[RMDB]
RNA sequence: GGGAACGACUCGAGUAGAGUCGAAAAACGGAUGGUACGCCAUCCGACCAUUGGGUAGAAGCGUUCAAUCAGCACCGUGACGGUGCAGAUUGGAAAUUGCCCAUGAUACGCACCAUACGUGGUGCGAAAAAGCCAUCGGUGUUCGCACCGAUGGCAACUAUCUGGAAAACUUCGGUUUUCCAGAUAGAAAAGAAACAACAACAACAAC
Reactivity to DMS in 0.01 (KOAc 150mM, MgCl2 10mM, bicine 150mM(pH8.5), 24C), signal-to-noise 1, nucleotides 027 to 156: a100c070g010g000a020u000g000g040u000a100c300g050c060c010a020u010c010c010g000a020c020c010a120u000u000g020g010g020u000a080g020a020a070g040c200g010u000u000c020a030a040u000c000a120g020c010a010c000c010g010u000g060a150c180g060g000u020g000c010a020g030a000u000u020g000g000a010a040a050u000u000g000c040c020c000a060u000g020a060u010a140c020g050c010a000c000c020a070u010a080c240g020u010g030g040u060g010c030g010a040a060a070a110a070g000c000c010a020u000c050g000g020u000g010u000u000c300g030c010a050c000c000g010a000u010g020g000c000a000a010
Reactivity to 2A3 in 0.01 (KOAc 150mM, MgCl2 10mM, bicine 150mM(pH8.5), 24C), signal-to-noise 4, nucleotides 027 to 156: a000c010g000g010a000u000g000g000u060a050c240g040c030c010a000u000c000c010g010a000c000c000a080u040u050g000g010g000u040a060g030a140a010g060c040g050u170u250c050a000a010u020c020a010g000c010a010c000c010g110u220g260a180c300g020g010u000g000c010a000g000a000u000u000g000g000a010a030a030u020u010g000c010c000c000a010u060g040a020u030a020c010g000c000a010c000c000a020u040a080c270g070u030g010g000u000g000c000g010a020a010a000a010a000g010c000c000a000u000c020g000g000u020g030u070u120c210g020c110a000c000c000g000a000u000g000g000c000a000a000
The record gives the reactivity of an RNA of 207 nucleotides to DMS and 2A3.
The 2A3 profile rests on 3,027 reads.